[RMDB]
RNA sequence: GGGAACGACUCGAGUAGAGUCGAAAAAAGAUAUGGACAGACUGGAGCCAUAUGCAUGCGACGACGAGGACUCGGAAACGAGUCCUCAUCAGCAUGCAUUUGGCGAUGAAAGUCUGUCCUAAGUCAAGUGAUUGUUAUAGUUCGCUAUAACAAUCACAAAAGAAACAACAACAACAAC
Reactivity to DMS in 0.01 (KOAc 150mM, MgCl2 10mM, bicine 150mM(pH8.5), 24C), signal-to-noise 5, nucleotides 027 to 126: a100a090g000a050u000a300u000g010g010a010c010a010g010a020c010u000g000g000a090g020c000c000a010u000a000u000g010c000a000u000g000c000g020a160c300g010a020c040g010a030g000g000a010c000u010c010g000g000a110a100a170c000g010a020g010u000c000c000u000c000a010u000c000a140g000c000a010u000g000c000a000u000u000u000g010g000c010g000a050u020g010a110a130a020g000u000c000u000g020u000c000c000u000a000a050g010u000c040a110a150
Reactivity to 2A3 in 0.01 (KOAc 150mM, MgCl2 10mM, bicine 150mM(pH8.5), 24C), signal-to-noise 2, nucleotides 027 to 126: a000a030g090a030u090a030u140g000g000a010c000a000g000a010c010u010g000g020a010g010c000c000a010u000a010u020g000c000a010u000g000c020g150a250c130g000a010c030g000a220g010g010a000c010u000c000g010g030a110a080a020c010g000a000g010u000c000c000u010c000a000u000c000a010g000c010a000u010g000c010a000u000u000u000g000g010c020g000a020u010g000a020a010a000g010u000c000u000g000u000c000c000u000a020a000g030u020c020a080a130